Chemical mapping of a 177-nucleotide RNA with 2A3 and DMS. The data come from the RNA Mapping Database (RMDB), library OK2TRN. The 2A3 profile rests on 2,243 reads. The reactions ran in a buffer of 150 mM KOAc, 10 mM MgCl2 and 150 mM bicine (pH 8.5), at 24 C. DMS adducts were read by reverse transcription with MarathonRT. The DMS profile rests on 2,203 reads. Reactivities are given for positions 27 through 126.
RNA sequence: GGGAACGACUCGAGUAGAGUCGAAAAGCAGGUCGAUUAGCGUACCGCGUAGCUGAAACUCAUCGUCGAUUGGACGUGGUUUUUCGUCGGCGGGAAGGGCGAGGAUGGCUUCAUCGAACAGUUGCAGGUAGUCUUUCAUCUUCGGAUGAAAGACUACAAAAGAAACAACAACAACAAC
Reactivity to 2A3 in 0.01 (KOAc 150mM, MgCl2 10mM, bicine 150mM(pH8.5), 24C), signal-to-noise 2, nucleotides 027 to 126: g000c020a010g040g040u050c010g020a050u070u220a030g090c040g060u100a050c000c020g000c060g060u060a070g030c040u040g040a140a040a010c040u060c060a130u120c030g040u000c000g100a300u050u280g120g010a000c070g050u110g060g020u130u060u000u040u080c020g020u010c000g020g040c020g040g000g020a080a020g040g000g000c030g020a000g020g000a040u150g060g000c000u150u050c020a040u040c010g010a020a010c020a110g070u140u090g080c040a020g160
Reactivity to DMS in 0.01 (KOAc 150mM, MgCl2 10mM, bicine 150mM(pH8.5), 24C), signal-to-noise 2, nucleotides 027 to 126: g030c070a070g010g010u000c030g010a080u010u010a070g020c080g030u000a090c040c020g000c050g040u010a100g020c070u020g000a130a050a080c090u010c040a070u010c030g020u000c010g000a140u010u030g030g010a010c060g020u010g010g020u000u000u000u000u000c060g010u000c050g010g020c010g020g010g010a080a080g000g030g000c030g000a030g010g040a070u000g010g020c020u000u010c120a060u000c070g000a070a050c090a090g020u000u010g020c060a120g000